[RMDB]
RNA sequence: GGGAACGACUCGAGUAGAGUCGAAAACGGCCAUCGCGCAGACCGCUCCGCCACAGGGGCAAGGCGCCAGCGCGCAGAAGGCCAAUGACGAGAAGGCCAAGACCGAGGCCGAGCGCAAGGCCGAGCGGUUAUCGAACUAAUUCGUUAGUUCGAUAACAAAAGAAACAACAACAACAAC
Reactivity to DMS in 0.01 (KOAc 150mM, MgCl2 10mM, bicine 150mM(pH8.5), 24C), signal-to-noise 9, nucleotides 027 to 126: c070g010g000c000c000a120u020c170g010c020g020c030a140g010a150c140c080g010c030u000c010c050g000c100c150a140c230a140g010g000g000g010c040a080a060g010g010c040g010c030c110a110g010c130g010c020g010c100a070g010a080a120g010g010c000c010a080a090u020g010a110c140g000a110g010a100a140g010g000c020c020a100a110g000a120c060c030g000a160g000g000c000c000g000a090g000c010g020c040a100a150g000g000c000c010g000a120g010c120g010
Reactivity to 2A3 in 0.01 (KOAc 150mM, MgCl2 10mM, bicine 150mM(pH8.5), 24C), signal-to-noise 9, nucleotides 027 to 126: c030g020g000c010c000a080u100c050g000c000g000c020a010g060a080c020c050g000c010u010c000c010g110c090c080a170c060a120g020g020g000g000c030a030a080g050g000c030g010c030c020a050g020c010g000c010g000c040a040g030a200a050g020g000c000c020a010a080u090g030a030c060g020a020g040a200a060g050g000c040c040a050a040g080a040c030c030g010a070g020g000c000c000g000a020g000c030g000c020a040a100g020g000c000c010g010a040g020c060g040
Source information
The record gives the reactivity of an RNA of 177 nucleotides to DMS and 2A3. For 2A3 the reverse transcriptase was SuperScript II with manganese. The RNA was probed in 150 mM KOAc, 10 mM MgCl2 and 150 mM bicine (pH 8.5) at 24 C.